[RMDB]
RNA sequence: GGGAACGACUCGAGUAGAGUCGAAAACUCAAUCACUACGGUGAUUGAGAAUGCUUACGCCUCAAUAAAGCUUGACUUGAGUGCCUCAAGCAGAUAUAGACUGAAACAUUUAGUAUGGUCAAGCAGGGAGCAACAGCUCGAGUACGCUCGAGCUGAAGAUUAAUACUCGGUUCGCCGAGUAUUAAUCAAAAGAAACAACAACAACAAC
Reactivity to 2A3 in 0.01 (KOAc 150mM, MgCl2 10mM, bicine 150mM(pH8.5), 24C), signal-to-noise 6, nucleotides 027 to 156: c000u000c000a010a000u000c010a010c000u040a030c260g110g000u000g000a000u010u000g000a000g010a010a070u070g000c000u040u040a040c060g020c010c010u020c040a040a100u120a190a110a030g020c000u020u020g010a010c010u030u040g030a020g060u120g070c020c010u090c100a030a010g000c010a000g080a010u220a030u040a070g120a060c060u080g050a030a160a030c040a070u090u140u080a090g040u080a070u170g050g000u000c000a000a000g020c020a020g040g040g020a080g020c030a030a050c000a020g010c000u020c010g000a000g000u030a030c240g010c070u000c010g000a000g000c010u000g000a000a000
Reactivity to DMS in 0.01 (KOAc 150mM, MgCl2 10mM, bicine 150mM(pH8.5), 24C), signal-to-noise 2, nucleotides 027 to 156: c000u000c000a010a020u000c000a010c000u000a170c300g130g000u020g010a030u030u000g020a030g020a060a030u000g000c070u010u020a080c110g010c030c000u000c050a080a120u000a040a090a140g010c020u000u000g000a030c020u000u000g000a050g020u000g000c010c030u020c040a270a100g030c010a160g020a200u000a120u000a140g030a130c030u000g000a100a080a050c020a060u010u000u000a090g040u010a070u000g030g000u000c000a010a030g030c020a300g000g010g020a050g010c020a100a130c010a010g000c010u000c000g020a030g010u000a110c280g070c010u010c010g000a020g000c000u000g000a000a060

Chemical mapping of a 207-nucleotide RNA with 2A3 and DMS. The RNA was probed in 150 mM KOAc, 10 mM MgCl2 and 150 mM bicine (pH 8.5) at 24 C.